The data come from the RNA Mapping Database (RMDB), library OK2TRN. Structure probing data (2A3 and DMS) for a 177-nucleotide construct. For DMS the reverse transcriptase was MarathonRT. Reactivities are given for positions 27 through 126. The DMS profile rests on 1,567 reads. For 2A3 the reverse transcriptase was SuperScript II with manganese. The 2A3 profile rests on 850 reads.

[RMDB]
RNA sequence: GGGAACGACUCGAGUAGAGUCGAAAACAGUCAAGGUGAAGGCGGGCCAGACCAUCGCCGCAUUCUACCAGAGCACCGUCAUGAUCUUUGGCACGAUGGCUCGCUACAUUCCUAGAGUUAGGGAAAAAUGCUAAAUAGGCUUCGGCCUAUUUAGCAUAAAAGAAACAACAACAACAAC
Reactivity to 2A3 in 0.01 (KOAc 150mM, MgCl2 10mM, bicine 150mM(pH8.5), 24C), signal-to-noise 1, nucleotides 027 to 126: c070a020g110u040c060a080a000g000g000u040g090a120a020g080g000c000g020g020g000c010c010a000g010a110c010c060a090u100c040g000c010c000g000c000a000u150u030c040u190a150c040c010a080g000a000g000c020a030c100c060g070u110c070a090u070g120a200u050c030u100u020u060g020g000c050a030c010g110a100u060g000g000c000u010c000g040c000u050a040c010a070u150u050c020c000u020a000g030a010g110u170u130a040g020g050g020a070a030a020a050
Reactivity to DMS in 0.01 (KOAc 150mM, MgCl2 10mM, bicine 150mM(pH8.5), 24C), signal-to-noise 2, nucleotides 027 to 126: c080a210g000u010c110a080a080g000g040u010g000a120a130g000g030c000g000g020g040c010c010a090g000a160c140c070a080u010c100g040c080c050g010c050a050u000u030c090u000a050c020c050a110g000a050g010c110a020c050c060g010u000c090a040u010g000a100u000c040u000u010u010g030g010c060a040c120g000a100u000g000g020c000u000c020g000c030u000a090c120a100u000u000c020c000u000a090g010a080g010u010u010a050g000g010g010a040a020a080a090